[RMDB]
RNA sequence: GGGAACGACUCGAGUAGAGUCGAAAAUGGCGUUAUUGUAGUCUCGUCAGGAGGGGUUCUGUCCAACAUGCCCUUGACUCAGGAUGAGGCAGAGGAGCUCAUGUACAGGUUUUGCAUUGCCAAUGAGACCUGGCUGUUCUUUCGAGAACAGCCAGGUAAAAGAAACAACAACAACAAC
Reactivity to DMS in 0.01 (KOAc 150mM, MgCl2 10mM, bicine 150mM(pH8.5), 24C), signal-to-noise 1, nucleotides 027 to 126: u000g000g020c110g020u000u000a080u010u000g020u010a050g020u000c010u000c040g060u000c060a020g020g020a070g000g020g010g000u000u000c130u000g020u020c090c050a090a100c060a120u000g020c030c010c000u020u000g020a190c030u000c080a050g030g020a060u000g000a120g000g040c050a110g020a050g000g000a270g040c020u010c070a030u000g020u000a050c040a040g000g000u010u010u010u010g010c110a050u000u020g000c050c050a100a100u000g000a100g000
Notes
This 177-nucleotide RNA was probed chemically with DMS. The data come from the RNA Mapping Database (RMDB), library OK2TRN.